[RMDB]
RNA sequence: GGGAACGACUCGAGUAGAGUCGAAAACAGCAAGGAGCGAAAUCUGCGGCGCUUCCGCAAGCUCUCCUGCUACAUCAUGCAGGACGAUGUUCUGAUCGCCAAUCUGACUGUUCGCGAGGCCAUGAUGCAAGGUGUAGACGUUCGCGUCUACACCUUGAAAAGAAACAACAACAACAAC
Reactivity to DMS in 0.01 (KOAc 150mM, MgCl2 10mM, bicine 150mM(pH8.5), 24C), signal-to-noise 4, nucleotides 027 to 126: c100a030g010c080a070a090g010g000a080g000c020g010a050a110a090u000c140u010g020c060g000g010c300g000c190u000u010c010c040g000c030a140a090g000c020u000c010u000c000c000u000g010c000u000a140c120a070u020c090a030u010g000c010a030g010g010a040c150g000a060u000g000u000u000c070u000g010a070u010c060g010c050c050a090a150u000c040u010g020a100c090u010g010u010u000c040g010c060g020a120g010g000c070c030a030u010g000a060u010g000
Reactivity to 2A3 in 0.01 (KOAc 150mM, MgCl2 10mM, bicine 150mM(pH8.5), 24C), signal-to-noise 3, nucleotides 027 to 126: c050a010g050c050a040a090g020g010a050g010c020g040a020a090a090u090c070u070g000c010g080g000c080g070c220u300u110c010c010g000c000a040a030g000c010u010c000u000c010c010u000g010c010u040a040c010a090u140c000a020u080g010c000a010g010g010a030c070g070a100u160g070u080u000c040u050g020a070u070c020g000c050c000a030a030u040c030u060g110a170c010u050g040u100u050c020g000c020g050a060g000g000c020c000a040u050g000a020u070g090

Chemical mapping of a 177-nucleotide RNA with DMS and 2A3. As a SHAPE reagent, 2A3 marks flexible, mostly unpaired nucleotides at the ribose 2'-OH. The reactions ran in a buffer of 150 mM KOAc, 10 mM MgCl2 and 150 mM bicine (pH 8.5), at 24 C. For 2A3, 3,755 sequencing reads were counted. It was measured as part of the RMDB library OK2TST. For 2A3 the reverse transcriptase was SuperScript II with manganese.